[RMDB]
RNA sequence: GGGAACGACUCGAGUAGAGUCGAAAAACAUAUAGUACGCUAUAUGAAGUAAAAUAAGAAUUUAUCGAACAGACCUGUUUUGACAGGAGCUGCCGUGUGGCGGCAAAGCGCCUAUACGUAGGCGCAAUAAUUUGACCAGCUUCGGCUGGUCAAAUUAAAAAGAAACAACAACAACAAC
Reactivity to DMS in 0.01 (KOAc 150mM, MgCl2 10mM, bicine 150mM(pH8.5), 24C), signal-to-noise 1, nucleotides 027 to 126: a030c000a010u030a010u000a000g120u050a120c130g020c070u000a000u010a000u010g000a080a130g000u010a040a130a200a000u010a070a090g000a190a050u010u000u020a070u010c000g000a180a110c110a110g020a150c000c000u010g030u000u010u000u030g000a040c020a010g000g000a020g000c030u000g040c070c030g000u050g000u030g010g000c000g000g000c010a020a020a020g000c000g000c000c000u000a030u010a080c220g010u050a010g000g000c000g000c010a050a000
Reactivity to 2A3 in 0.01 (KOAc 150mM, MgCl2 10mM, bicine 150mM(pH8.5), 24C), signal-to-noise 2, nucleotides 027 to 126: a010c000a000u030a000u000a000g000u050a090c150g010c060u030a000u000a000u070g020a060a000g150u180a060a100a160a290u220a030a100g070a040a120u120u090u020a150u230c050g060a080a100c000a020g110a180c010c000u030g090u020u090u150u140g180a020c010a000g010g040a090g050c000u070g000c040c000g120u150g200u240g150g000c000g000g000c060a140a000a000g000c000g070c000c030u030a030u000a030c270g010u030a010g000g000c000g000c030a000a000